[RMDB]
RNA sequence: GGGAACGACUCGAGUAGAGUCGAAAAUUCUGCCGACCGUCAUGGUGUCGAUUCCGCUGACCGUGCUGCUGAUCUUCACCCUCAACGUUCUGCUGGCUCAGUUCAGCGCUGCAGACUUAUCUGGCGAGCAGUAUUAGUACUUCGGUACUAAUACUGCAAAAGAAACAACAACAACAAC
Reactivity to DMS in 0.01 (KOAc 150mM, MgCl2 10mM, bicine 150mM(pH8.5), 24C), signal-to-noise 5, nucleotides 027 to 126: u000u010c020u000g010c050c040g010a080c090c020g010u000c120a080u020g010g010u000g010u000c040g020a190u010u000c080c040g030c070u000g000a060c040c040g000u000g000c020u000g000c040u010g000a060u000c020u000u000c060a180c040c000c040u000c080a090a120c110g010u000u010c020u000g010c030u010g010g000c010u020c080a090g010u010u000c070a060g020c040g020c130u000g020c060a080g010a070c130u000u000a060u000c050u000g010g020c080g010a190
Reactivity to 2A3 in 0.01 (KOAc 150mM, MgCl2 10mM, bicine 150mM(pH8.5), 24C), signal-to-noise 4, nucleotides 027 to 126: u030u000c020u040g040c030c040g050a080c020c020g060u120c040a070u150g040g010u050g050u050c000g060a100u110u030c030c020g000c060u020g040a080c000c030g060u050g010c020u000g000c010u030g020a090u020c030u090u040c070a120c020c000c010u030c040a050a060c040g030u070u020c020u040g000c010u040g030g000c020u020c090a050g030u150u060c020a010g000c040g020c030u060g000c020a010g020a010c000u100u100a110u080c030u040g050g010c030g030a020